An RNA of 207 nucleotides, treated with DMS and 2A3 and read out base by base. For DMS the reverse transcriptase was MarathonRT. Values cover nucleotides 27 to 156. For DMS, 10,828 sequencing reads were counted. 2A3 is a SHAPE reagent: it acylates the 2'-hydroxyl of flexible nucleotides of all four kinds. For 2A3, 3,517 sequencing reads were counted. The RNA was probed in 150 mM KOAc, 10 mM MgCl2 and 150 mM bicine (pH 8.5) at 24 C.

[RMDB]
RNA sequence: GGGAACGACUCGAGUAGAGUCGAAAAGAAUCACCGUACCUAUUUAGGUUUACGCUCCAAGAUCGGUGGAUAGCAGCCCUAUCAAUAUCUGGGAGAACUGUGCUAUGUUUAGAAGAUUAGGUAGUCUAUUACACAGCCAUGUUCGCAUGGCUGUGAACAAAACAAGUUACUUCGGUAACUUGUUUUGAAAAGAAACAACAACAACAAC
Reactivity to DMS in 0.01 (KOAc 150mM, MgCl2 10mM, bicine 150mM(pH8.5), 24C), signal-to-noise 4, nucleotides 027 to 156: g010a120a130u000c010a200c030c030g010u000a070c000c010u000a160u010u000u000a040g020g010u000u000u000a070c060g020c030u000c020c020a070a080g000a010u000c090g030g040u010g020g010a060u000a070g010c070a180g010c110c090c020u020a170u010c030a070a140u000a090u000c040u000g010g010g000a110g010a070a090c060u000g030u010g020c040u000a060u000g020u000u010u010a090g000a080a100g010a110u000u000a060g020g010u000a080g020u000c020u010a110u020u010a210c000a000c000a010g030c000c000a010u000g000u010u020c290g030c010a020u010g000g000c010u000g020u000g000a030a120
Reactivity to 2A3 in 0.01 (KOAc 150mM, MgCl2 10mM, bicine 150mM(pH8.5), 24C), signal-to-noise 5, nucleotides 027 to 156: g060a020a060u120c020a010c070c010g040u050a030c020c000u060a180u180u210u250a040g000g030u040u050u080a060c070g010c020u060c040c030a060a020g010a080u050c020g020g100u060g060g040a020u040a020g040c060a010g010c030c010c010u040a030u070c060a100a040u030a020u210c050u050g020g030g020a060g010a050a020c070u070g020u010g080c020u030a020u120g050u040u100u070a090g020a160a020g010a120u100u050a060g100g000u020a040g050u010c030u050a110u030u110a040c000a000c000a000g000c000c000a010u030g010u060u060c160g000c130a000u000g000g000c000u000g000u000g000a000a000